RNA sequence: GGGAACGACUCGAGUAGAGUCGAAAAUGGUAGAAGGUUGAAGAUGUCGCUGCCUGUUGCGUCCCAGCCACCCUGCAGCUCCUGCCCAACAGCUCUGGGCCGAGGAGGCUGUGCCCUGCGCCUGUGGCGCAUUUCCUAGGUUCGCCUAGGAAAUGCGAAAAGAAACAACAACAACAAC
Reactivity to DMS in 0.01 (KOAc 150mM, MgCl2 10mM, bicine 150mM(pH8.5), 24C), signal-to-noise 9, nucleotides 027 to 126: u010g010g020u000a050g010a100a070g010g010u000u010g010a100a110g010a090u000g010u010c060g010c040u000g010c040c020u010g010u000u000g010c090g010u000c020c020c020a120g010c040c040a080c040c050c050u000g010c030a040g000c020u000c010c010u000g000c010c000c010a040a110c160a110g010c130u000c080u000g010g000g020c070c250g000a050g010g020a050g010g010c020u000g010u000g000c040c020c020u000g010c060g010c050c020u000g020u000g010g010
Reactivity to 2A3 in 0.01 (KOAc 150mM, MgCl2 10mM, bicine 150mM(pH8.5), 24C), signal-to-noise 9, nucleotides 027 to 126: u090g030g010u050a050g030a250a070g070g030u060u090g050a100a030g060a130u120g040u110c040g010c060u030g040c010c030u060g070u070u070g040c040g030u020c010c010c010a000g010c000c000a020c010c000c020u040g000c000a010g010c010u020c010c010u030g010c010c010c000a070a090c050a070g050c020u040c050u100g010g020g000c020c040g090a040g030g010a010g060g010c010u010g010u020g010c000c000c010u040g010c030g030c000c020u120g020u110g110g000